[RMDB]
Conditions: 150 mM KOAc, 10 mM MgCl2 and 150 mM bicine (pH 8.5), 24 C. An RNA of 177 nucleotides, treated with 2A3 and DMS and read out base by base. For DMS the reverse transcriptase was MarathonRT.
RNA sequence: GGGAACGACUCGAGUAGAGUCGAAAAUUUCUCGUUAGAGAGCGAUCGGCGUUUAAUUUGGGUCUUUUUGGCUGCUCAGAAGGGUGGUAGUUAUCAGAAAAUACAUCUCUUGACCCAAGGCUAACGAAUGCUAAAUUAGGUUCGCCUAAUUUAGCAUAAAAGAAACAACAACAACAAC
Reactivity to 2A3 in 0.01 (KOAc 150mM, MgCl2 10mM, bicine 150mM(pH8.5), 24C), signal-to-noise 5, nucleotides 027 to 126: u030u010u010c010u000c000g010u010u030a050g020a010g000a010g110c020g050a170u180c110g210g050c030g070u010u060u180a110a100u030u040u020g010g000g000u000c000u040u110u000u040u070g060g000c010u020g010c020u010c050a110g090a270a060g060g020g020u060g020g020u020a040g050u050u090a090u190c050a030g150a040a100a010a020u190a050c040a100u030c050u000c010u090u060g020a010c000c000c000a000a010g020g000c000u010a010a010c020g060a060
Reactivity to DMS in 0.01 (KOAc 150mM, MgCl2 10mM, bicine 150mM(pH8.5), 24C), signal-to-noise 7, nucleotides 027 to 126: u000u000u000c010u000c010g010u010u010a050g010a130g010a070g020c070g000a170u010c140g010g010c030g010u000u000u000a050a180u000u000u000g010g010g010u000c000u000u010u000u000u000g010g010c030u000g000c040u000c040a120g020a090a090g000g010g010u000g000g010u000a050g010u000u010a080u010c120a110g000a080a050a060a100u000a070c110a080u010c050u000c070u000u000g000a030c000c000c010a030a040g010g000c070u000a010a030c050g010a090